[RMDB]
RNA sequence: GGGAACGACUCGAGUAGAGUCGAAAAUCGUUUAUGUGCGACAUGAACGAAGUGCAUCCUGUCCUACAGGAUGCAGAUGGCUUCUGUAGGACAGAGGCCAGAGCUAAUCUGUCGCACAGAUUAGCGAGGACAGCAAUGUAUUCGUACAUUGCUGUCCAAAAGAAACAACAACAACAAC
Reactivity to DMS in 0.01 (KOAc 150mM, MgCl2 10mM, bicine 150mM(pH8.5), 24C), signal-to-noise 6, nucleotides 027 to 126: u000c000g010u010u000u010a050u010g010u000g010c040g010a050c000a000u010g000a010a050c050g000a110a120g010u000g010c010a030u000c000c010u000g010u010c120c100u010a160c000a000g000g000a000u010g020c010a020g000a120u000g010g010c000u000u000c000u000g010u000a090g010g040a300c010a010g000a030g010g010c010c020a050g000a170g000c050u000a050a020u000c010u000g000u000c080g000c040a180c000a000g000a060u000u000a010g010c010g010a070
Reactivity to 2A3 in 0.01 (KOAc 150mM, MgCl2 10mM, bicine 150mM(pH8.5), 24C), signal-to-noise 5, nucleotides 027 to 126: u040c000g000u000u000u020a020u010g020u010g080c040g020a020c020a010u110g010a090a030c050g050a130a040g080u030g020c000a010u010c000c000u020g020u060c020c020u080a030c000a000g000g000a000u020g000c000a000g050a090u090g070g010c000u000u000c010u010g040u060a120g070g270a030c000a010g000a000g010g000c010c010a010g010a000g010c010u010a020a020u010c000u000g020u010c010g010c020a010c000a000g000a010u030u030a010g000c010g010a040